RNA sequence: GGGAACGACUCGAGUAGAGUCGAAAAAGCGACCGAUACGUCGGUCGCAAUCCCAGAAUCGGGGUUUUGAGGGCGAGAUGAGUUUAUGUUUUAUCCAACUGGCCCACAAAGUCCCGCUUUUGGGGAACUUAAUUGAUUUCUUCGGAAAUCAAUUAAGAAAAGAAACAACAACAACAAC
Reactivity to 2A3 in 0.01 (KOAc 150mM, MgCl2 10mM, bicine 150mM(pH8.5), 24C), signal-to-noise 7, nucleotides 027 to 126: a000g000c000g000a000c010c000g000a010u020a030c260g080u010c000g000g000u000c000g000c000a000a010u010c000c000c000a000g010a000a010u010c000g000g000g010g000u000u000u010u020g040a090g020g010g020c070g090a020g010a060u090g020a050g110u060u110u100a120u120g160u040u130u160u160a030u050c010c010a020a050c040u030g120g000c000c000c000a020c000a000a010a000g000u010c010c000c000g010c000u010u000u000u010g000g000g000g010a040a000
Reactivity to DMS in 0.01 (KOAc 150mM, MgCl2 10mM, bicine 150mM(pH8.5), 24C), signal-to-noise 2, nucleotides 027 to 126: a070g020c000g000a000c000c010g010a030u020a060c190g020u000c000g000g010u000c010g020c000a010a020u000c000c000c000a020g000a000a000u000c010g000g010g000g010u010u000u000u000g000a060g010g010g000c010g010a020g010a110u010g000a110g000u010u020u020a070u040g010u030u020u020u020a050u020c030c000a050a100c030u000g000g010c010c010c000a070c010a000a020a010g020u000c000c000c010g020c020u000u000u000u000g020g000g000g010a100a120